The record gives the reactivity of an RNA of 207 nucleotides to 2A3 and DMS. Reactivities are given for positions 27 through 156. High DMS reactivity at an A or C suggests that its Watson-Crick edge is free. The RNA was probed in 150 mM KOAc, 10 mM MgCl2 and 150 mM bicine (pH 8.5) at 24 C. DMS adducts were read by reverse transcription with MarathonRT. As a SHAPE reagent, 2A3 marks flexible, mostly unpaired nucleotides at the ribose 2'-OH.

RNA sequence: GGGAACGACUCGAGUAGAGUCGAAAAACAAACUCCUCGGCACUGGCAGUGUGAUACAGUGUGUAGUCACCUUCAGCAUAACCUUCCCUAUGUCGUCGCUUCUUUUCGGGGGCAUAGACAUUUGAGUGGGCGUGCGAGUUGGCCGCUAGUCGAGCGGGCCGUAGAACGUAUUCGUACGUUCUACGGCAAAAGAAACAACAACAACAAC
Reactivity to 2A3 in 0.01 (KOAc 150mM, MgCl2 10mM, bicine 150mM(pH8.5), 24C), signal-to-noise 2, nucleotides 027 to 156: a000c060a010a070a030c000u030c010c000u000c050g020g000c000a010c050u050g000g000c120a120g090u060g000u060g180a040u080a130c000a040g080u050g050u040g070u150a050g040u030c020a030c040c010u040u070c040a050g000c020a060u040a120a240c010c000u050u020c000c000c010u020a000u010g000u000c020g060u030c060g010c020u050u010c000u070u300u110u160c100g040g000g000g000g000c000a000u080a040g010a000c010a010u070u010u000g120a150g000u020g000g000g010c050g000u000g020c010g010a070g010u010u020g040g010c000c020g010c010u020a020g070u090c060g040a010g000c020g000g000
Reactivity to DMS in 0.01 (KOAc 150mM, MgCl2 10mM, bicine 150mM(pH8.5), 24C), signal-to-noise 1, nucleotides 027 to 156: a020c080a130a120a060c030u000c010c000u010c030g000g000c000a060c000u000g010g000c050a130g030u000g020u000g000a180u000a040c010a060g010u000g000u000g000u010a040g020u010c030a040c000c030u020u000c070a210g060c010a030u000a100a070c030c050u010u000c020c000c000u000a040u020g010u000c020g050u000c150g050c020u000u010c020u000u000u000u010c300g000g000g000g020g060c030a090u000a100g010a070c020a040u000u000u010g000a020g000u000g030g050g090c010g030u000g000c020g020a120g010u000u000g000g020c000c020g030c030u000a130g020u000c030g010a120g010c110g020g020